About this RNA
Chemical mapping of a 177-nucleotide RNA with DMS and 2A3. The RNA was probed in 150 mM KOAc, 10 mM MgCl2 and 150 mM bicine (pH 8.5) at 24 C. High DMS reactivity at an A or C suggests that its Watson-Crick edge is free. 2A3 adducts were read by reverse transcription with SuperScript II with manganese. Reactivities are given for positions 27 through 126. The data come from the RNA Mapping Database (RMDB), library OK2TST.

RNA sequence: GGGAACGACUCGAGUAGAGUCGAAAAAGCGACUUCUUGUUUGACACCAACCAAUCAGUCUUUGGGUUCCAAGAAGAAUCCUCUCCAGCAGCUGGGGCUGAAGGCCGGACGAGAACAGGCUCCAAUAAUGGUCACUGAUAUUCGUAUCAGUGACCAUAAAAGAAACAACAACAACAAC
Reactivity to DMS in 0.01 (KOAc 150mM, MgCl2 10mM, bicine 150mM(pH8.5), 24C), signal-to-noise 2, nucleotides 027 to 126: a070g010c090g010a090c110u000u000c010u020u000g010u000u010u010g020a060c110a160c080c020a080a110c120c040a070a090u000c070a070g020u010c040u010u000u020g000g000g030u000u010c110c050a060a050g010a140a050g000a080a100u000c060c000u000c080u000c030c040a090g010c060a100g020c040u000g020g030g010g000c030u000g020a040a080g000g010c050c040g020g010a050c020g000a120g020a040a020c130a110g000g000c010u010c040c070a100a060u000a060
Reactivity to 2A3 in 0.01 (KOAc 150mM, MgCl2 10mM, bicine 150mM(pH8.5), 24C), signal-to-noise 1, nucleotides 027 to 126: a010g050c050g030a020c010u010u020c030u070u060g090u070u100u140g090a050c050a060c040c000a070a030c040c020a080a100u150c030a050g060u000c010u100u030u080g040g000g000u100u000c040c060a050a020g060a040a000g010a010a050u000c000c010u010c020u000c040c020a000g030c050a030g070c030u060g000g000g050g000c030u020g060a040a060g050g000c030c000g050g000a050c030g030a010g060a060a020c010a060g050g100c020u020c000c000a050a060u250a130